[RMDB]
RNA sequence: GGGAACGACUCGAGUAGAGUCGAAAAUGCUGUGUCCGAGGUAGGGUGUAGUUUGGAUUUGUCCCGCCAUGAAAUAAAAUGCGGCGAUGGAGUGUUUUUAUUUCGAGACGUCAGCAACUGGCGUGAAUGAAAAUGCAUCAUUCGUGAUGCAUUUUCAAAAAGAAACAACAACAACAAC
Reactivity to 2A3 in 0.01 (KOAc 150mM, MgCl2 10mM, bicine 150mM(pH8.5), 24C), signal-to-noise 1, nucleotides 027 to 126: u060g000c020u000g020u000g010u030c010c030g030a070g080g070u120a080g050g000g040u030g030u020a090g000u020u060u120g080g050a040u090u000u210g060u040c000c040c000g020c010c000a110u150g000a050a050a000u050a020a070a000a000u030g010c070g040g030c080g070a080u100g100g060a140g000u060g060u040u060u000u050u070a040u000u040u030c010g060a000g010a030c030g030u000c020a010g060c070a170a060c110u020g000g000c020g000u030g070a090a060
Reactivity to DMS in 0.01 (KOAc 150mM, MgCl2 10mM, bicine 150mM(pH8.5), 24C), signal-to-noise 4, nucleotides 027 to 126: u000g020c040u000g020u010g010u000c030c030g010a110g020g020u010a070g020g010g010u010g000u000a060g000u000u010u000g030g000a130u000u000u010g000u000c010c040c010g010c080c080a070u010g000a040a040a070u000a040a030a050a050u010g010c040g000g010c090g010a080u000g000g000a130g020u000g000u010u000u000u010u010a040u010u000u010c020g020a160g000a030c010g010u000c010a020g010c180a070a120c110u000g000g000c010g010u000g000a100a100

An RNA of 177 nucleotides, treated with 2A3 and DMS and read out base by base.
The RNA was probed in 150 mM KOAc, 10 mM MgCl2 and 150 mM bicine (pH 8.5) at 24 C.
It was measured as part of the RMDB library OK2TST.
For 2A3 the reverse transcriptase was SuperScript II with manganese.
The 2A3 profile rests on 994 reads.
The DMS profile rests on 5,466 reads.